[RMDB]
RNA sequence: GGGAACGACUCGAGUAGAGUCGAAAAUCGACUAGCCGUAGUGGCGAAGAACGACCUGGUAGGGUGCCGCAGAGACCCACUAUUAGGCUAGUAUAAAAAUCUCUGCGGAUUAUAGACAGAACAUUAAGAUCAGUCCCAUAUUCGUAUGGGACUGAUCAAAAGAAACAACAACAACAAC
Reactivity to 2A3 in 0.01 (KOAc 150mM, MgCl2 10mM, bicine 150mM(pH8.5), 24C), signal-to-noise 1, nucleotides 027 to 126: u030c000g000a000c000u010a020g000c000c000g040u000a000g000u000g070g060c010g010a060a070g120a050a030c050g050a070c000c000u010g170g000u030a130g020g000g120u090g030c010c000g020c000a000g020a030g000a030c000c000c000a000c000u010a010u040u100a010g000g000c020u000a000g000u000a040u030a000a000a000a000a000u070c000u000c000u000g040c000g010g010a010u150u110a040u010a100g070a020c000a000g080a170a080c140a230u120u300a090a000
Reactivity to DMS in 0.01 (KOAc 150mM, MgCl2 10mM, bicine 150mM(pH8.5), 24C), signal-to-noise 2, nucleotides 027 to 126: u010c010g000a050c000u030a000g000c000c020g010u000a010g000u000g010g000c300g000a130a090g010a160a080c130g020a120c100c000u000g000g000u010a120g000g000g000u000g000c000c010g020c000a000g000a000g020a110c300c000c000a000c000u000a000u030u060a230g040g050c000u000a030g000u000a000u020a000a000a030a000a050u030c020u000c000u000g010c030g000g000a080u000u010a090u020a110g000a090c170a130g070a110a130c270a120u030u030a060a110

Annotation: An RNA of 177 nucleotides, treated with 2A3 and DMS and read out base by base. Values cover nucleotides 27 to 126.